Structure probing data (2A3 and DMS) for a 207-nucleotide construct. High 2A3 reactivity points to a flexible backbone, as in loops and unpaired stretches. 2A3 adducts were read by reverse transcription with SuperScript II with manganese. For DMS the reverse transcriptase was MarathonRT.
[RMDB]
RNA sequence: GGGAACGACUCGAGUAGAGUCGAAAACCCUGUCAUCAGGCCGAAACGAAGGCACGUACCCCUUCGAAUGGCGUCGGGGAGUCAGCGGCUAUAUAUGCGCCUAAUGCUGGCAUCCGGGAACGAGCGUAUUAGACAGUAAUCUUCGGAUUACUGUCAACGUAACUGAUUUCUUCGGAAAUCAGUUACGAAAAGAAACAACAACAACAAC
Reactivity to 2A3 in 0.01 (KOAc 150mM, MgCl2 10mM, bicine 150mM(pH8.5), 24C), signal-to-noise 2, nucleotides 027 to 156: c030c000c020u070g200u130c030a210u080c030a090g220g000c000c000g070a070a070a040c030g010a010a060g010g010c110a010c030g140u150a090c020c030c010c030u000u000c020g080a090a090u140g000g000c000g030u050c000g000g010g000g040a100g020u000c000a000g000c000g020g000c050u010a020u020a030u010a020u300g120c060g000c020c010u100a190a080u300g000c000u000g000g010c010a100u050c000c000g000g010g000a020a030c050g000a040g080c080g040u080a110u080u100a080g000a000c000a000g010u000a000a010u010c030u070u090c230g070g040a000u000u000a000c000u000g000u000c000a000a000
Reactivity to DMS in 0.01 (KOAc 150mM, MgCl2 10mM, bicine 150mM(pH8.5), 24C), signal-to-noise 1, nucleotides 027 to 156: c020c000c050u090g030u020c050a070u000c090a050g020g020c020c000g040a150a080a250c050g020a040a080g030g020c030a180c100g060u000a130c030c050c010c010u000u000c010g010a160a160u000g020g000c020g030u000c000g030g000g000g020a220g010u020c000a050g020c000g050g060c020u040a090u000a140u010a070u020g040c130g030c060c080u010a050a070u000g020c020u010g000g000c060a110u010c010c030g000g000g000a060a110c100g000a080g010c070g030u000a130u010u000a190g000a040c000a020g010u000a010a000u010c000u010u010c280g060g020a020u000u010a000c010u000g000u010c000a010a030